Structure probing data (DMS and 2A3) for a 177-nucleotide construct.
The RNA was probed in 150 mM KOAc, 10 mM MgCl2 and 150 mM bicine (pH 8.5) at 24 C.
For DMS the reverse transcriptase was MarathonRT.
[RMDB]
RNA sequence: GGGAACGACUCGAGUAGAGUCGAAAAGAUAGCAAAACACUGGCCUGAUGAACAAGAAGCAGAUACUAGGCUUAUUCGAUGGGUAAAAGGUCUCAAAUACUCAAAGCCCUAAUACACGUACGGAGUCCUUUUCAACUGAGUUCGCUCAGUUGAAAAGAAAAGAAACAACAACAACAAC
Reactivity to DMS in 0.01 (KOAc 150mM, MgCl2 10mM, bicine 150mM(pH8.5), 24C), signal-to-noise 2, nucleotides 027 to 126: g050a140u000a060g040c050a060a090a080a130c050a090c010u000g000g000c050c020u000g000a190u020g000a040a080c170a070a070g010a070a060g010c070a050g010a130u000a090c080u000a070g000g000c020u000u000a080u000u000c050g000a110u000g000g010g000u000a060a070a110a120g010g000u010c040u000c130a080a060a130u010a030c030u000c050a040a040a070g020c060c020c000u000a010a050u010a050c180a050c150g000u000a070c100g020g000a080g000u000c050
Reactivity to 2A3 in 0.01 (KOAc 150mM, MgCl2 10mM, bicine 150mM(pH8.5), 24C), signal-to-noise 1, nucleotides 027 to 126: g020a030u120a000g050c030a070a000a080a050c050a030c010u080g010g020c040c000u050g020a040u060g060a090a070c070a060a010g110a060a010g000c050a000g050a070u060a150c060u080a060g000g030c000u010u050a060u040u020c020g030a040u080g020g070g000u020a020a040a030a130g010g000u000c020u010c070a050a070a040u090a060c010u000c010a000a070a060g030c000c000c000u010a050a000u050a050c080a000c100g040u120a040c030g060g030a040g050u050c000